[RMDB]
RNA sequence: GGGAACGACUCGAGUAGAGUCGAAAAAGUUAGGUUCGCUAUGGUGCAACUCUUUAACGCAAUAACGAACUAAUUCUAAGCAAGUAAUGGAGAAAUGCCAGGGUCACUAUCUAGCCAUAAUAGUGCUGUAAGUGACUUAGAUUCGUCUAAGUCACAAGAAGUAUAAAGGUUUCGACCUUUAUACUUCAAAAGAAACAACAACAACAAC
Reactivity to DMS in 0.01 (KOAc 150mM, MgCl2 10mM, bicine 150mM(pH8.5), 24C), signal-to-noise 3, nucleotides 027 to 156: a080g010u010u000a040g010g010u000u000c020g040c000u000a030u010g000g030u010g020c020a130a100c190u000c130u010u000u000a110a090c060g010c000a050a020u000a020a030c010g020a030a030c020u000a040a060u010u010c070u000a090a120g020c030a000a110g000u000a090a080u000g000g000a110g010a050a090a090u000g000c010c050a090g000g020g020u000c030a030c030u000a050u000c040u000a130g010c020c030a080u010a060a110u000a110g020u000g020c030u000g010u000a080a150g010u010g000a010c000u000u010a010g010a040u000u010c300g040u000c010u000a010a020g020u000c000a010c000a040a100
Reactivity to 2A3 in 0.01 (KOAc 150mM, MgCl2 10mM, bicine 150mM(pH8.5), 24C), signal-to-noise 5, nucleotides 027 to 156: a000g060u060u030a060g000g080u020u020c020g000c020u030a020u090g140g060u070g060c030a080a140c080u060c080u220u260u190a140a060c050g000c030a030a030u050a070a030c010g000a020a000c010u020a010a020u090u070c050u110a080a020g060c040a070a040g050u120a040a110u110g050g040a050g040a100a090a030u090g020c030c030a040g050g000g020u050c010a010c030u020a030u060c040u050a030g030c010c010a020u040a170a030u030a100g040u050g040c030u050g050u120a180a080g000u000g000a000c000u000u000a000g000a000u020u030c040g000u000c100u000a000a000g000u000c000a000c000a000a040